Annotation: Conditions: 150 mM KOAc, 10 mM MgCl2 and 150 mM bicine (pH 8.5), 24 C. The record gives the reactivity of an RNA of 177 nucleotides to 2A3 and DMS. For 2A3 the reverse transcriptase was SuperScript II with manganese. The data come from the RNA Mapping Database (RMDB), library TTRDEL.
[RMDB]
RNA sequence: GGGAACGACUCGAGUAGAGUCGAAAAGAUAUGGACCACCAGUGGAGGUUGUCGGAAACGACAAGACCUAUGAAGCUGAGUGGUCCUAAGUCAAAGUGUACAGGUCUGUUCGCAGACCUGUACACAACUCCUAAGGUAGCUUCGGCUACCUUAGGAGAAAAGAAACAACAACAACAAC
Reactivity to 2A3 in 0.01 (KOAc 150mM, MgCl2 10mM, bicine 150mM(pH8.5), 24C), signal-to-noise 1, nucleotides 027 to 126: g030a010u090a050u150g020g000a020c010c000a000c010c010a000g000u050g070g080a030g030g000u040u020g010u000c020g040g020a070a000a030c010g030a000c010a050a050g180a050c000c010u280a300u300g100a030a050g000c010u000g090a080g240u000g030g010u020c000c010u000a020a000g010u000c040a050a050a010g020u000g010u000a000c000a000g000g000u010c020u030g090u070u260c300g040c100a010g000a010c000c000u020g000u000a020c000a020c000a000a000
Reactivity to DMS in 0.01 (KOAc 150mM, MgCl2 10mM, bicine 150mM(pH8.5), 24C), signal-to-noise 1, nucleotides 027 to 126: g010a090u000a300u010g010g020a030c000c000a030c000c000a040g030u000g020g000a020g010g000u000u000g000u000c000g000g000a100a060a230c010g010a010c020a060a060g030a030c000c010u010a300u010g000a150a170g000c010u000g000a090g010u000g010g030u000c000c000u000a000a050g010u000c010a120a070a140g010u010g010u000a010c000a000g000g000u000c000u000g000u020u020c150g010c000a000g000a000c000c000u000g000u000a030c000a000c000a000a110